Structure probing data (2A3 and DMS) for a 207-nucleotide construct. Values cover nucleotides 27 to 156.
RNA sequence: GGGAACGACUCGAGUAGAGUCGAAAACGGUUACGCCUUCUUUACCGUUAUCAAGGAAGGUACUCGGCCAUGCUAAGGGAAGCAUUAUUCCUUAGGCGCAUGUCGCCACCAGCAUGGUGUGAGGGGAAAAAGUAUGCUGGGUUCGCCCAGCAUACAAGACGCUAAGAAAGUUCGCUUUCUUAGCGUCAAAAGAAACAACAACAACAAC
Reactivity to 2A3 in 0.01 (KOAc 150mM, MgCl2 10mM, bicine 150mM(pH8.5), 24C), signal-to-noise 3, nucleotides 027 to 156: c010g000g000u010u010a030c080g020c010c000u000u000c000u000u070u040a020c020c020g270u090u070a020u130c110a020a000g030g000a010a000g010g010u040a040c000u000c010g060g000c000c020a000u010g000c000u030a030a050g000g010g040a030a020g030c130a140u110u120a140u150u140c010c000u030u050a070g000g000c000g020c050a180u270g090u220c000g020c000c000a040c010c030a000g000c000a000u000g000g010u060g100u090g040a010g060g010g000g050a050a130a000a000a040g000u000a000u000g000c000u000g000g000g000u040u020c050g060c000c000c000a000g000c000a010u000a000c000a000a000
Reactivity to DMS in 0.01 (KOAc 150mM, MgCl2 10mM, bicine 150mM(pH8.5), 24C), signal-to-noise 1, nucleotides 027 to 156: c010g030g000u000u000a000c040g000c010c000u000u000c000u000u030u010a020c050c000g020u000u020a010u000c140a040a040g050g010a030a000g030g020u000a080c030u000c010g010g030c010c000a020u000g020c000u000a190a170g030g000g020a080a060g070c160a210u000u030a210u000u000c020c000u000u000a160g050g020c010g000c090a110u020g030u020c020g040c000c000a150c150c020a060g020c030a000u020g000g050u000g000u000g000a120g020g000g040g000a030a070a090a160a180g000u000a000u000g000c000u000g020g080g030u000u010c250g050c020c000c000a000g000c010a020u000a000c000a010a070
Source: RMDB library M2RFPK, as collected in RNAgym.